[RMDB]
Background
Structure probing data (DMS and 2A3) for a 177-nucleotide construct. DMS adducts were read by reverse transcription with MarathonRT. The RNA was probed in 150 mM KOAc, 10 mM MgCl2 and 150 mM bicine (pH 8.5) at 24 C. It was measured as part of the RMDB library OK1LIB. Reactivities are rounded to 0.1 and cut off at 0 and 3. Values cover nucleotides 27 to 126.

RNA sequence: GGGAACGACUCGAGUAGAGUCGAAAAUUACUGAGAAUUUUAAUAAAACUGUAUAUCAUCAAGGUUUUAACAAAAGAGCUCGACAAAAGCUAAAAUUUCGGAACAAGAAUGAUGCACGCAUGGCGCGAGACUUAAUCUUUUUCGAAAGAUUAAGUCUAAAAGAAACAACAACAACAAC
Reactivity to DMS in 0.01 (KOAc 150mM, MgCl2 10mM, bicine 150mM(pH8.5), 24C), signal-to-noise 2, nucleotides 027 to 126: u030u040a070c090u000g000a100g010a100a110u020u010u010u030a030a300u010a060a020a020a020c020u000g000u020a120u030a110u060c090a060u010c070a090a280g020g000u000u000u000u010a020a140c100a010a040a190a140g000a140g010c030u000c080g040a150c290a090a070a080a020g010c000u000a030a010a080a080u000u010u010c070g000g000a030a050c100a070a120g000a050a020u000g010a010u000g000c050a030c020g020c050a100u000g000g010c050g010c080g010
Reactivity to 2A3 in 0.01 (KOAc 150mM, MgCl2 10mM, bicine 150mM(pH8.5), 24C), signal-to-noise 4, nucleotides 027 to 126: u050u020a040c050u050g010a000g090a110a100u050u050u100u130a180a150u100a050a130a020a010c010u040g070u050a210u040a070u300c070a030u070c080a050a030g010g020u060u020u010u020a070a050c070a020a080a110a080g090a070g050c030u010c080g140a050c130a100a150a020a010g010c000u050a020a010a030a180u060u120u070c070g060g020a090a040c030a060a060g060a100a040u080g030a030u150g020c050a000c060g030c050a050u160g090g000c060g000c030g030